[RMDB]
RNA sequence: GGGAACGACUCGAGUAGAGUCGAAAAACUUGUCAUCGCUAUGAUGACUGGUAAAACGAUAUUGCCUUAUUCACAUCGUAAGAAUUCGUCCAGAUGACACUAUCUCCUUCCGGCUUUAACCCUGUGGCUAGUUACAAUUGUUCGCAAUUGUAACUAGAAAAGAAACAACAACAACAAC
Reactivity to 2A3 in 0.01 (KOAc 150mM, MgCl2 10mM, bicine 150mM(pH8.5), 24C), signal-to-noise 8, nucleotides 027 to 126: a000c020u010u040g010u010c010a010u000c010g120c240u300a110u300g000a000u010g000a010c000u010g010g010u070a080a090a020a020c080g030a040u020a100u130u140g070c020c020u090u090a110u120u120c070a060c010a120u070c070g050u040a070a030g040a100a080u100u060c040g020u000c040c010a050g030a100u070g030a030c000a010c060u050a080u050c020u020c010c010u060u000c020c000g000g030c020u030u040u050a070a080c010c010c010u040g020u030g150g030
Reactivity to DMS in 0.01 (KOAc 150mM, MgCl2 10mM, bicine 150mM(pH8.5), 24C), signal-to-noise 7, nucleotides 027 to 126: a030c020u000u000g010u000c000a010u000c000g010c300u020a090u010g010a010u000g000a010c000u000g000g010u000a060a070a090a080c080g010a080u000a080u010u000g010c050c030u000u000a080u010u010c080a050c110a050u000c070g010u000a060a090g000a070a110u000u000c070g010u000c020c040a070g010a080u000g010a080c080a040c060u000a060u000c040u000c030c020u000u000c040c030g000g000c050u000u000u000a070a130c040c010c010u000g020u010g020g010